The record gives the reactivity of an RNA of 207 nucleotides to 2A3. The reactions ran in a buffer of 150 mM KOAc, 10 mM MgCl2 and 150 mM bicine (pH 8.5), at 24 C. The 2A3 profile rests on 769 reads. 2A3 adducts were read by reverse transcription with SuperScript II with manganese.
[RMDB]
RNA sequence: GGGAACGACUCGAGUAGAGUCGAAAAUGCAACCAUAGCAAAAAUGAUGGUCUUACCCGCCGAUACUGACGCUUUAACAAAGAAUGGGUGCUCAUAAUUUGAUAGGCGUUUUGCGAUCUCAGCAUAAGCAACAACCUGGUACGGAUACGGAACGACCCACCGUCAGAUUCUUCGGAAUCUGACGGUGAAAAGAAACAACAACAACAAC
Reactivity to 2A3 in 0.01 (KOAc 150mM, MgCl2 10mM, bicine 150mM(pH8.5), 24C), signal-to-noise 2, nucleotides 027 to 156: u120g000c000a070a070c030c010a020u150a030g050c100a070a080a060a060a020u290g040a110u090g010g030u000c000u030u110a040c000c000c000g050c020c010g080a090u010a060c010u100g060a020c000g020c030u020u010u150a140a060c040a030a050a000g090a030a040u060g010g100g020u140g090c040u050c070a050u040a180a030u030u000u080g040a080u070a020g000g000c000g020u100u030u090u080g020c040g030a080u110c090u030c180a020g010c020a090u040a130a000g020c040a020a030c000a010a040c050c030u100g030g000u010a020c020g010g040a020u050a160c000g000g040a030a020c060g020a000c010c000